[RMDB]
RNA sequence: GGGAACGACUCGAGUAGAGUCGAAAACUCUGAGUCUUCGGACUCAGAGAAACGCUUUCGACUGUGAUACCAACAAACGCGAGUUUGUUGGUAUAAUCGCAAAAAGGUGGGAGUUCGCUCCCACCAAUCUAACUAGGUAGUUCGCUACCUAGUUAGAAAAAGAAACAACAACAACAAC
Reactivity to 2A3 in 0.01 (KOAc 150mM, MgCl2 10mM, bicine 150mM(pH8.5), 24C), signal-to-noise 1, nucleotides 027 to 126: c000u010c010u000g000a020g010u000c010u000u110c240g120g000a010c000u010c000a000g000a010g000a000a010a000c070g020c060u040u110u100c040g070a090c080u050g040u000g080a000u020a030c000c000a000a020c010a000a020a000c020g060c020g050a060g060u000u010u010g010u000u000g010g000u020a010u000a000a000u000c030g020c030a020a050a040a250a300g000g050u070g020g040g020a040g050u170u170c300g140c060u000c000c030c000a000c000c000a000a000
Reactivity to DMS in 0.01 (KOAc 150mM, MgCl2 10mM, bicine 150mM(pH8.5), 24C), signal-to-noise 6, nucleotides 027 to 126: c000u000c000u000g000a010g010u000c000u000u010c230g030g010a020c000u000c000a010g000a000g010a030a060a060c250g000c150u000u000u000c040g010a130c110u000g020u000g000a060u000a010c000c000a000a000c000a000a000a000c000g000c300g000a200g020u000u000u000g010u000u000g000g010u000a010u000a050a070u000c050g000c120a030a070a040a080a080g000g030u000g000g000g000a010g020u000u010c210g000c000u000c000c000c000a010c010c010a010a020

This 177-nucleotide RNA was probed chemically with 2A3 and DMS. For DMS the reverse transcriptase was MarathonRT. Reactivities are rounded to 0.1 and cut off at 0 and 3. For 2A3, 1,596 sequencing reads were counted. High 2A3 reactivity points to a flexible backbone, as in loops and unpaired stretches.